[RMDB]
RNA sequence: GGGAACGACUCGAGUAGAGUCGAAAACAGCCAGUAAAUAAAUCUGCUUAGUUGAAUGUGUUGGCAGAAUUUAGAAAUAGCUGGCAAUAGUAAAACCAUGUUAUGAGCCUUUAUGGCAUUGAGGUUGUACGCCAUUACAUUUCGAUGUAAUGGCGUAAAAAGAAACAACAACAACAAC
Reactivity to DMS in 0.01 (KOAc 150mM, MgCl2 10mM, bicine 150mM(pH8.5), 24C), signal-to-noise 3, nucleotides 027 to 126: c110a090g010c000c000a040g000u010a060a090a140u000a000a000a030u000c000u000g010c010u000u020a090g020u020u040g000a190a120u050g050u030g000u000u000g030g000c000a010g000a010a050u020u010u000a020g010a060a090a090u010a200g010c000u010g010g010c010a150a080u010a100g010u010a060a060a100a100c020c030a110u050g010u020u020a070u010g010a080g030c000c000u010u020u000a080u040g030g020c010a110u020u000g010a090g000g030u020u000g020
Reactivity to 2A3 in 0.01 (KOAc 150mM, MgCl2 10mM, bicine 150mM(pH8.5), 24C), signal-to-noise 2, nucleotides 027 to 126: c000a060g000c050c000a050g000u260a000a170a180u000a000a000a000u050c000u010g040c000u150u300a080g040u280u240g300a120a250u240g150u090g000u010u170g000g000c000a000g040a000a000u020u000u000a060g030a000a030a000u280a080g060c000u000g000g030c020a000a030u040a000g010u000a060a000a000a200c000c000a020u040g080u060u130a100u260g090a000g030c010c020u020u280u190a030u300g000g070c000a000u000u110g050a070g000g000u020u000g120
Source: RMDB libraries RFM100 and RFMREP, as collected in RNAgym. The record gives the reactivity of an RNA of 177 nucleotides to DMS and 2A3. The reactions ran in a buffer of 150 mM KOAc, 10 mM MgCl2 and 150 mM bicine (pH 8.5), at 24 C.